[RMDB]
The record gives the reactivity of an RNA of 177 nucleotides to DMS and 2A3. It was measured as part of the RMDB library RFM100. DMS adducts were read by reverse transcription with MarathonRT. The reactions ran in a buffer of 150 mM KOAc, 10 mM MgCl2 and 150 mM bicine (pH 8.5), at 24 C.
RNA sequence: GGGAACGACUCGAGUAGAGUCGAAAACGGCGGCUAGCAGAUGAGAGUUAGGCGCAUAGUCUGGCAGGCCGGGGCGAUAGGCUUGCAGCAGACCCAUGCCGUCCGGUUUGGCACCGGCUUUCCAGGCCCAAUCACAGAGGUUCGCCUCUGUGAUUGGAAAAGAAACAACAACAACAAC
Reactivity to DMS in 0.01 (KOAc 150mM, MgCl2 10mM, bicine 150mM(pH8.5), 24C), signal-to-noise 2, nucleotides 027 to 126: c030g000g040c030g000g000c000u000a070g000c010a070g010a190u000g000a120g020a130g000u010u000a050g000g030c010g090c010a040u000a040g000u010c020u000g000g020c070a020g000g000c010c020g020g000g000g020c040g010a070u010a060g010g010c190u000u030g010c120a090g000c110a050g000a070c040c090c100a180u000g000c040c020g000u000c020c020g020g040u000u000u000g000g010c100a060c010c030g000g000c060u000u010u000c000c000a010g010g000c040
Reactivity to 2A3 in 0.01 (KOAc 150mM, MgCl2 10mM, bicine 150mM(pH8.5), 24C), signal-to-noise 4, nucleotides 027 to 126: c030g030g000c010g030g040c010u050a020g020c030a040g060a300u270g040a130g010a030g090u040u030a030g060g030c000g010c020a010u030a020g000u000c010u000g010g000c020a000g000g010c000c000g000g000g020g000c030g070a090u070a120g030g000c000u030u090g020c050a010g030c010a010g030a110c010c000c020a050u070g000c010c010g020u070c000c020g060g090u040u090u160g100g000c020a010c010c010g000g010c000u000u000u000c000c000a000g010g000c010